This 177-nucleotide RNA was probed chemically with DMS and 2A3. The 2A3 profile rests on 1,607 reads. For DMS, 3,203 sequencing reads were counted. DMS adducts were read by reverse transcription with MarathonRT. The RNA was probed in 150 mM KOAc, 10 mM MgCl2 and 150 mM bicine (pH 8.5) at 24 C.

[RMDB]
RNA sequence: GGGAACGACUCGAGUAGAGUCGAAAAAAACCUCUCUUAGCCUCUGUUUCUUUAUUGCGGUAGAUACUAUUAACCUAAAAUGAGAAGGCUAAUAGUAUCUACCACAAUAAAAUUGUUGUGAGGAUAAACAAUACAUAUCGUUCGCGAUAUGUAUUGUAAAAGAAACAACAACAACAAC
Reactivity to DMS in 0.01 (KOAc 150mM, MgCl2 10mM, bicine 150mM(pH8.5), 24C), signal-to-noise 3, nucleotides 027 to 126: a030a060a080c060c030u000c080u020c050u010u000a130g000c010c000u010c010u010g010u010u000u000c080u000u000u000a000u000u000g010c030g010g010u000a000g000a010u010a000c000u000a010u000u010a000a010c010c000u000a080a070a120a130u020g010a190g010a170a050g010g010c020u000a000a000u000a000g010u000a000u000c000u000a000c010c000a000c000a000a000u000a010a010a040a100u000u010g020u010u000g000u000g010a030g000g000a040u000a040a090
Reactivity to 2A3 in 0.01 (KOAc 150mM, MgCl2 10mM, bicine 150mM(pH8.5), 24C), signal-to-noise 1, nucleotides 027 to 126: a000a000a000c010c000u000c000u000c020u080u070a010g000c020c010u000c060u050g060u050u040u020c020u020u080u010a010u010u010g020c010g020g000u000a010g000a010u010a000c000u000a000u000u020a000a010c010c010u100a110a140a130a160u230g060a170g070a280a000g010g000c000u000a000a010u000a010g000u010a010u010c010u020a000c000c000a000c000a000a000u000a000a010a000a000u040u040g050u030u030g030u000g020a050g010g000a020u130a010a200